[RMDB]
RNA sequence: GGGAACGACUCGAGUAGAGUCGAAAAGUACGGUUCAAAGAACCGAUCAACGCUGGAUUUUUUUCCUCUAGAACAUGUCAAUAAAACCGUAAUUUUUAUACAUGGGGGAUAUUGGCAGUGGUGUGAACCUACGUAGGGGAUUCGUCCCCUACGUAGGAAAAGAAACAACAACAACAAC
Reactivity to DMS in 0.01 (KOAc 150mM, MgCl2 10mM, bicine 150mM(pH8.5), 24C), signal-to-noise 1, nucleotides 027 to 126: g070u010a130c020g020g000u000u000c030a110a090a280g010a090a010c000c040g000a120u010c040a110a050c080g030c080u000g000g000a030u000u000u000u000u060u000u000c000c000u000c100u010a070g010a110a090c020a050u000g000u000c020a060a030u000a000a050a290a130c060c060g000u020a090a150u000u000u060u020u000a060u000a150c080a080u020g000g010g000g020g010a300u000a030u000u000g030g000c000a070g000u000g000g000u000g000u000g000a080a150
Reactivity to 2A3 in 0.01 (KOAc 150mM, MgCl2 10mM, bicine 150mM(pH8.5), 24C), signal-to-noise 1, nucleotides 027 to 126: g000u070a080c000g000g020u010u010c050a290a080a300g010a020a010c000c000g010a060u080c070a020a040c170g000c030u060g130g070a170u020u030u000u020u000u200u030c050c010u020c060u090a050g000a090a000c020a090u050g010u000c000a000a030u020a000a000a010a040c090c010g000u120a150a220u080u240u000u110u300a160u120a030c010a050u120g050g000g020g040g000a000u030a000u020u000g000g000c000a050g110u010g100g030u110g000u050g100a020a020

Annotation
Conditions: 150 mM KOAc, 10 mM MgCl2 and 150 mM bicine (pH 8.5), 24 C. This 177-nucleotide RNA was probed chemically with DMS and 2A3. 2A3 is a SHAPE reagent: it acylates the 2'-hydroxyl of flexible nucleotides of all four kinds.